[RMDB]
RNA sequence: GGGAACGACUCGAGUAGAGUCGAAAAGAUAUGGACCGUGUGGUGUAGCCUGAGGGUCGGAAACGACCCGAAGGCGCAGAUACGUAACAUCACGGUCCUAAGUCAAAUCGGAGGUUCGCCUCCGAAAGUUUGCGACUAUGUUCGCAUAGUCGCAAACAAAAGAAACAACAACAACAAC
Reactivity to DMS in 0.01 (KOAc 150mM, MgCl2 10mM, bicine 150mM(pH8.5), 24C), signal-to-noise 1, nucleotides 027 to 126: g040a020u000a050u010g000g000a020c010c030g030u000g000u000g040g030u000g000u000a010g040c000c000u010g010a300g040g010g000u020c000g040g000a000a000a060c000g000a000c000c000c000g000a140a020g000g020c000g060c260a090g010a210u030a060c170g030u010a020a040c000a030u010c000a010c000g000g000u020c000c000u000a000a060g000u000c000a110a140a140u000c010g000g000a030g000g000u020u020c270g000c000c000u000c000c000g010a000a020a090